This 177-nucleotide RNA was probed chemically with DMS and 2A3. The reactions ran in a buffer of 150 mM KOAc, 10 mM MgCl2 and 150 mM bicine (pH 8.5), at 24 C. Reactivities are rounded to 0.1 and cut off at 0 and 3. The DMS profile rests on 6,322 reads.
[RMDB]
RNA sequence: GGGAACGACUCGAGUAGAGUCGAAAAAGAACUAGCGAUUGUAAAAGGCUGUUUGCCCUAAGAUAUGGAAUUAGCGCAAAUAGGUCCGAAUUCCUUGAUAACAUUUCGGACAACCGCGCUAAAACAAACGAUCAUAAGAAUUCGUUCUUAUGAUCGUAAAAGAAACAACAACAACAAC
Reactivity to DMS in 0.01 (KOAc 150mM, MgCl2 10mM, bicine 150mM(pH8.5), 24C), signal-to-noise 6, nucleotides 027 to 126: a090g000a030a030c030u010a030g020c020g020a150u000u010g020u020a090a080a130a090g010g020c010u000g000u000u000u000g000c020c000c000u010a090a080g010a140u010a100u010g010g010a080a150u000u000a010g010c050g020c010a040a070a130u010a120g010g000u000c000c000g000a030a010u000u010c120c150u000u020g010a100u000a090a110c190a060u000u000u000c010g010g000a030c010a050a070c300c170g010c000g010c020u000a000a000a040a120c080a050a110
Reactivity to 2A3 in 0.01 (KOAc 150mM, MgCl2 10mM, bicine 150mM(pH8.5), 24C), signal-to-noise 5, nucleotides 027 to 126: a020g020a000a000c030u050a030g020c020g200a220u030u280g080u240a110a090a050a070g070g000c010u000g010u020u010u060g040c010c000c000u040a110a060g090a100u110a080u270g070g010a060a120u030u010a020g000c000g000c010a030a060a070u160a150g110g040u000c000c000g000a000a020u060u070c030c000u080u110g050a020u050a130a050c040a090u030u050u000c010g000g000a000c010a010a020c060c040g000c000g000c010u010a020a000a000a010c010a000a110